[RMDB]
RNA sequence: GGGAACGACUCGAGUAGAGUCGAAAAUCUGCGACAGGGCCGAAGCGCGAAACAAAGUGCAACACGGCAAUGCUCUGCGCUUCUACAUACCAGCAGCCGAGAACUGACGCAGGUAACAAGCGCAGCAAUAUAUAAAUUUAUUCGUAAAUUUAUAUAUAAAAGAAACAACAACAACAAC
Reactivity to 2A3 in 0.01 (KOAc 150mM, MgCl2 10mM, bicine 150mM(pH8.5), 24C), signal-to-noise 2, nucleotides 027 to 126: u000c010u060g020c000g080a030c050a040g070g030g040c040c020g040a030a030g010c000g010c000g050a070a070a080c100a070a160a020g010u000g040c020a070a040c040a030c130g000g000c000a010a030u050g000c010u000c010u080g010c010g020c000u030u000c020u110a130c040a080u140a040c010c020a000g030c010a010g030c010c030g130a110g030a070a010c000u030g070a010c000g000c060a030g000g020u000a030a010c050a050a010g040c030g010c040a010g010c000a030
Reactivity to DMS in 0.01 (KOAc 150mM, MgCl2 10mM, bicine 150mM(pH8.5), 24C), signal-to-noise 2, nucleotides 027 to 126: u030c000u010g000c010g010a140c050a070g000g010g050c060c130g020a090a250g030c010g000c000g000a160a140a120c250a080a100a170g050u000g010c050a070a120c140a200c060g000g000c000a080a070u010g010c020u020c010u000g000c010g000c000u010u010c140u020a100c180a100u050a100c070c040a080g020c050a120g010c020c010g020a120g000a120a120c020u000g010a040c020g000c030a020g020g010u000a080a130c090a100a080g000c010g040c010a010g000c090a080